Chemical mapping of a 207-nucleotide RNA with 2A3. Conditions: 150 mM KOAc, 10 mM MgCl2 and 150 mM bicine (pH 8.5), 24 C.
[RMDB]
RNA sequence: GGGAACGACUCGAGUAGAGUCGAAAAGGGGUCCCACCUGAGUAGCGUAUGUGGUUCUUGGAUUUAUGGAGCUGAAGCCUCCACGGCUCCAUUGUCAGAACCCAUACGCGAAAGGGUGGGACGGAGGCACCCAAAGUGGAAUUGUUCGCAAUUCCACGCCGAUAACAGAGUUCGCUCUGUUAUCGGCAAAAGAAACAACAACAACAAC
Reactivity to 2A3 in 0.01 (KOAc 150mM, MgCl2 10mM, bicine 150mM(pH8.5), 24C), signal-to-noise 4, nucleotides 027 to 156: g110g000g040g000u010c000c000c000a000c000c000u000g000a000g000u000a000g010c020g000u010a010u030g210u290g010g020u090u080c090u210u240g160g010a070u210u280u130a020u070g000g010a000g000c010u050g010a100a020g020c000c010u010c020c020a030c000g000g000c000u000c010c010a000u010u020g010u000c030a020g040a050a000c010c000c000a000u000a000c000g000c010g000a000a000a000g010g000g000u000g000g000g000a000c000g000g000a000g000g000c030a060c000c020c010a080a120a030g010u000g000g010a010a000u000u030g030u070u190c260g000c120a000a000u000u000c000c000a000c010
The data come from the RNA Mapping Database (RMDB), library RNAMAK.